[RMDB]
RNA sequence: GGGAACGACUCGAGUAGAGUCGAAAAGUGGGAAGGGACGCUGCUUGAACGGGAGGCGACGUCUGCCCUGGAGAAACUGCCACAGCCUUCUCUAAUAAGGCCUUUAGCGCUGUUUAUACUAAGCUGAUAACAUCCACGCCUGGCGAACGGGGAGCGAACCUUUUACGCUGUUCGCAGCGUAAAAGGUAAAAGAAACAACAACAACAAC
Reactivity to 2A3 in 0.01 (KOAc 150mM, MgCl2 10mM, bicine 150mM(pH8.5), 24C), signal-to-noise 1, nucleotides 027 to 156: g090u090g000g000g070a020a010g020g000g000a000c000g000c020u000g000c000u010u240g020a070a010c060g040g000g000a000g010g000c010g050a070c010g100u070c060u050g050c000c000c020u010g000g000a060g020a000a060a000c070u120g100c000c090a070c080a150g210c000c000u110u070c130u000c060u020a100a300u090a130a030g000g000c000c000u010u070u130a020g080c080g000c050u020g000u090u190u070a210u050a060c120u100a120a000g000c040u000g090a030u040a180a120c020a070u010c050c000a040c000g000c000c030u000g000g000c000g030a020a000c000g000g000g000g000a000g000c010g000a000